Source: RMDB library 15KLIB, as collected in RNAgym. Chemical mapping of a 170-nucleotide RNA with DMS and 2A3. The RNA was probed in 150 mM KOAc, 10 mM MgCl2 and 150 mM bicine (pH 8.5) at 24 C. Reactivities are given for positions 27 through 129. As a SHAPE reagent, 2A3 marks flexible, mostly unpaired nucleotides at the ribose 2'-OH. The DMS profile rests on 9,115 reads. For 2A3, 6,214 sequencing reads were counted. DMS adducts were read by reverse transcription with MarathonRT.
RNA sequence: GGGAACGACUCGAGUAGAGUCGAAAAUCUGGCACCGUUAGCAAGACUUCAGACUGGAAGUGCAAGGUGACAGAUGUACUUUUCCCCGGCCAAAAAUACAGUAGCGAUUGUAAUGUCGUACGGUAUUAUACUGCCUCCUUCGGGAGGCAGAAAAGAAACAACAACAACAAC
Reactivity to DMS in 0.01 (KOAc 150mM, MgCl2 10mM, bicine 150mM(pH8.5), 24C), signal-to-noise 5, nucleotides 027 to 129: u000c000u020g000g010c050a080c000c040g030u040u030a210g050c010a210a000g100a300c020u010u000c020a190g010a190c230u080g070g000a070a020g030u040g030c010a070a150g020g020u040g010a000c010a000g010a040u000g010u060a040c120u090u020u000u000c000c010c000c120g000g000c070c160a030a070a150a080a030u000a070c000a040g020u020a050g020c040g010a030u020u040g020u080a200a130u030g030u020c030g020u040a020c020g000g070u010a010u070u020a140u040a030
Reactivity to 2A3 in 0.01 (KOAc 150mM, MgCl2 10mM, bicine 150mM(pH8.5), 24C), signal-to-noise 5, nucleotides 027 to 129: u000c000u000g010g000c000a000c000c010g120u040u050a040g000c050a180a020g140a180c000u000u010c000a130g040a300c150u270g140g000a100a000g020u040g010c010a030a030g000g000u000g010a000c000a000g000a000u010g000u080a090c050u040u050u010u020c000c000c000c000g130g020c040c030a080a100a000a000a000u030a010c000a030g030u040a020g140c010g030a010u010u040g100u230a110a060u230g000u060c010g000u000a020c010g000g000u010a020u070u010a020u040a070